[RMDB]
RNA sequence: GGGAACGACUCGAGUAGAGUCGAAAAAAGAUAUGGAAGUCUUUGUCAGUACAUGGAUCCGAAGAACUAAAUCGGAAACGAUUUAGGGAGGAUCACAUGUACUUGGAUUUAAGACUUCCUAAGUCAACAAUAUAGACAUCUUCGGAUGUCUAUAUUGAAAAGAAACAACAACAACAAC
Reactivity to DMS in 0.01 (KOAc 150mM, MgCl2 10mM, bicine 150mM(pH8.5), 24C), signal-to-noise 6, nucleotides 027 to 126: a110a090g010a040u000a300u000g000g010a020a010g010u000c000u000u000u000g000u000c000a020g000u000a000c010a010u000g000g010a020u000c000c010g010a140a130g000a150a220c010u000a000a010a000u000c000g010g000a150a090a210c010g010a010u000u000u000a000g000g000g010a070g000g000a010u000c010a040c000a000u000g010u000a000c000u000u010g010g000a020u000u010u000a020a010g000a020c010u000u000c000c000u000a010a100g010u000c020a110a220
Reactivity to 2A3 in 0.01 (KOAc 150mM, MgCl2 10mM, bicine 150mM(pH8.5), 24C), signal-to-noise 4, nucleotides 027 to 126: a000a010g050a040u070a050u140g010g000a010a000g010u010c000u020u030u020g010u020c010a010g010u010a000c010a010u010g020g010a010u010c010c030g180a300a030g000a050a010c010u010a000a000a000u000c010g040g060a100a050a060c010g010a010u000u010u010a010g010g000g020a030g000g000a010u000c080a000c000a020u000g000u000a010c000u000u090g030g000a010u290u290u160a010a010g000a000c000u000u020c000c000u000a070a010g040u010c000a010a040
This 177-nucleotide RNA was probed chemically with DMS and 2A3.
DMS adducts were read by reverse transcription with MarathonRT.
Reactivities are given for positions 27 through 126.
Conditions: 150 mM KOAc, 10 mM MgCl2 and 150 mM bicine (pH 8.5), 24 C.